[RMDB]
RNA sequence: GGGAACGACUCGAGUAGAGUCGAAAAACACAUUGCAAUAGUCGGGCCAGGAGGUGAGGAAUGCCUGGAUAACUCUGGGCCAGAUCUCUAUCUUGAUUGUAGAGACGGUUUCCUGACCAGCUGGGGAAGUAAGGCUUAUCUUCGGAUAAGCCUUACUAAAAGAAACAACAACAACAAC
Reactivity to DMS in 0.01 (KOAc 150mM, MgCl2 10mM, bicine 150mM(pH8.5), 24C), signal-to-noise 3, nucleotides 027 to 126: a080c100a110c160a080u020u020g000c170a110a080u030a050g030u030c030g030g000g000c070c010a020g010g010a290g000g000u000g000a010g000g010a020a090u000g000c020c000u010g000g000a030u000a110a160c270u020c030u000g020g020g010c000c240a130g000a080u000c000u000c010u000a000u060c050u010u020g030a100u020u010g010u000a030g000a010g000a050c040g020g000u020u030u000c000c000u020g000a060c030c000a070g000c010u000g010g000g000g000a100
Reactivity to 2A3 in 0.01 (KOAc 150mM, MgCl2 10mM, bicine 150mM(pH8.5), 24C), signal-to-noise 4, nucleotides 027 to 126: a000c080a000c010a140u100u240g030c030a060a200u040a190g070u060c070g000g030g070c030c000a030g070g030a030g060g080u080g050a000g010g010a040a000u070g020c010c010u000g000g000a030u100a060a040c090u030c030u050g010g000g020c000c010a070g070a290u010c010u000c000u020a100u150c070u060u280g180a300u070u190g030u010a000g000a000g000a000c010g030g000u030u070u010c000c010u000g010a000c000c000a010g060c010u010g000g020g030g050a000
Structure probing data (DMS and 2A3) for a 177-nucleotide construct.
The reactions ran in a buffer of 150 mM KOAc, 10 mM MgCl2 and 150 mM bicine (pH 8.5), at 24 C.